[RMDB]
RNA sequence: GGGAACGACUCGAGUAGAGUCGAAAACCGAAGCCCCAUUGAGGGAUAAUACAGGCUCUCCCAUCCAACUCCUAUUCCAACACGUCCUCGUCGUACAGAGUGGUAACAUGUGUCAUCACAUAUCCAACAUAGUGUCGCAUCUUCGGAUGCGACACAAGAUCAUCCCUAACUUCGGUUAGGGAUGAUCAAAAGAAACAACAACAACAAC
Reactivity to 2A3 in 0.01 (KOAc 150mM, MgCl2 10mM, bicine 150mM(pH8.5), 24C), signal-to-noise 2, nucleotides 027 to 156: c010c000g030a060a040g100c000c010c020c020a110u080u170g130a190g050g000g030a070u130a100a070u110a050c120a030g020g010c010u010c000u000c020c000c000a030u010c050c040a030a020c020u000c070c010u040a030u070u110c010c030a040a070c010a010c040g020u010c010c010u020c020g090u040c020g010u020a050c050a040g050a050g040u030g030g020u060a070a040c080a100u100g010u010g080u200c110a090u170c000a060c000a000u110a020u040c060c000a010a060c000a190u180a100g000u000g000u000c000g000c000a000u000c000u050u020c090g190g000a000u000g000c000g000a000c000a000c000a000a000